[RMDB]
RNA sequence: GGGAACGACUCGAGUAGAGUCGAAAAUAUAAUCUCUGGUCUACUUUUACAAAAGUUCAAGGUUUGGAAAACAUUGCUUUUAAUGUUGUUAAACAAGGCCAUUUUAUUGGUGUUGAGGGUGAACUACGGACUGUAGCCUUCGGGCUACAGAAAAGAAACAACAACAACAAC
Reactivity to 2A3 in 0.01 (KOAc 150mM, MgCl2 10mM, bicine 150mM(pH8.5), 24C), signal-to-noise 2, nucleotides 027 to 129: u150a000u040a000a060u000c000u000c000u000g010g020u000c070u190a130c070u000u000u200u000a020c030a030a240a070a000g010u050u130c000a000a050g130g000u070u060u060g100g010a060a050a050a000c040a050u080u050g200c080u200u020u010u010a050a160u040g060u130u000g000u010u120a020a090a030c060a020a140g020g030c010c070a000u000u120u060u060a220u130u040g030g040u070g000u020u010g020a020g000g110g000u040g000a030a030c050u040a110c000g000g000a000
Reactivity to DMS in 0.01 (KOAc 150mM, MgCl2 10mM, bicine 150mM(pH8.5), 24C), signal-to-noise 2, nucleotides 027 to 129: u050a100u040a130a070u040c030u000c110u010g000g000u040c060u020a130c100u030u010u040u100a140c250a140a130a010a020g060u030u040c090a110a080g040g030u000u000u000g030g000a140a000a120a030c020a040u050u010g010c210u030u050u080u000a020a060u020g020u000u000g030u000u000a090a100a080c090a100a050g020g000c020c050a040u030u030u020u000a070u000u000g010g050u030g030u050u000g040a080g000g020g080u000g010a050a030c020u050a020c120g030g010a120